[RMDB]
RNA sequence: GGGAACGACUCGAGUAGAGUCGAAAAGAGCAUGGUUAACAUUCCUGGUUGUCCUUUCUACAGCUGCCAGAAGGGGUACAAGGGCCCCUGGAUUGGAUCAGGUAUGCUCCAAGCACGCUGUCCAUGCAACUAGCAUCCAUUUCGAUGGAUGCUAGUUAAAAGAAACAACAACAACAAC
Reactivity to 2A3 in 0.01 (KOAc 150mM, MgCl2 10mM, bicine 150mM(pH8.5), 24C), signal-to-noise 4, nucleotides 027 to 126: g060a000g010c010a020u000g040g010u110u160a080a030c020a050u090u050c010c010u020g040g050u060u070g040u070c030c000u030u100u010c020u020a020c010a010g010c020u050g030c010c020a040g080a060a040g010g030g010g000u030a160c080a130a120g090g090g000c000c000c000c000u020g010g040a060u030u060g010g010a000u070c020a020g050g140u280a150u150g010c020u020c020c010a040a000g000c030a010c120g020c010u020g000u040c000c000a010u020g020c000
Reactivity to DMS in 0.01 (KOAc 150mM, MgCl2 10mM, bicine 150mM(pH8.5), 24C), signal-to-noise 6, nucleotides 027 to 126: g000a140g010c000a000u000g000g010u010u010a070a120c160a170u000u010c010c010u000g010g000u010u010g000u000c060c080u000u010u000c030u000a050c020a040g010c010u000g000c030c290a190g010a120a020g010g010g000g010u000a070c120a120a100g030g010g000c000c020c000c000u000g000g000a230u010u000g000g000a050u000c030a030g020g020u040a050u000g020c100u000c020c020a030a090g000c050a050c220g000c020u000g000u000c010c010a010u000g000c020
The data come from the RNA Mapping Database (RMDB), library OK1LIB. Structure probing data (2A3 and DMS) for a 177-nucleotide construct. DMS adducts were read by reverse transcription with MarathonRT. The reactions ran in a buffer of 150 mM KOAc, 10 mM MgCl2 and 150 mM bicine (pH 8.5), at 24 C.